[RMDB]
RNA sequence: GGGAACGACUCGAGUAGAGUCGAAAAGAUAUGGAUCUCUAAGAGCUUUUGACGGUGACCUGUCGGAAACGACAGAAGUCACCGAUAAGCUCUGGAUCCUAAGUCAAACCACUUCUUCGGAAGUGGAGCAGUCCUUUAAGUUCGCUUAAAGGACUGCAAAAGAAACAACAACAACAAC
Reactivity to 2A3 in 0.01 (KOAc 150mM, MgCl2 10mM, bicine 150mM(pH8.5), 24C), signal-to-noise 1, nucleotides 027 to 126: g010a000u010a020u170g010g000a010u010c100u040c170u300a240a020g010a010g010c040u080u260u300u300g300a300c180g000g000u000g010a000c000c000u000g000u000c000g010g030a050a100a050c020g010a010c000a000g020a050a030g000u030c000a000c000c000g020a020u000a010a000g000c040u010c000u000g000g000a020u010c010c010u020a080a010g050u000c030a060a070a130c000c000a000c000u000u000c020u020u060c240g290g010a020a010g000u000g000g010a030
Reactivity to DMS in 0.01 (KOAc 150mM, MgCl2 10mM, bicine 150mM(pH8.5), 24C), signal-to-noise 2, nucleotides 027 to 126: g000a050u000a300u020g000g000a010u010c000u030c300u020a100a060g000a000g010c000u000u000u030u000g000a200c160g000g000u000g010a030c000c000u000g000u000c050g000g010a110a020a130c010g010a000c000a010g040a050a060g010u010c000a010c010c010g000a020u000a010a020g010c000u000c000u000g000g000a020u000c000c000u010a030a060g020u000c000a120a140a240c000c000a020c000u000u000c000u020u020c300g010g020a000a000g000u010g010g000a100
Record summary:
The record gives the reactivity of an RNA of 177 nucleotides to 2A3 and DMS. DMS adducts were read by reverse transcription with MarathonRT. The RNA was probed in 150 mM KOAc, 10 mM MgCl2 and 150 mM bicine (pH 8.5) at 24 C.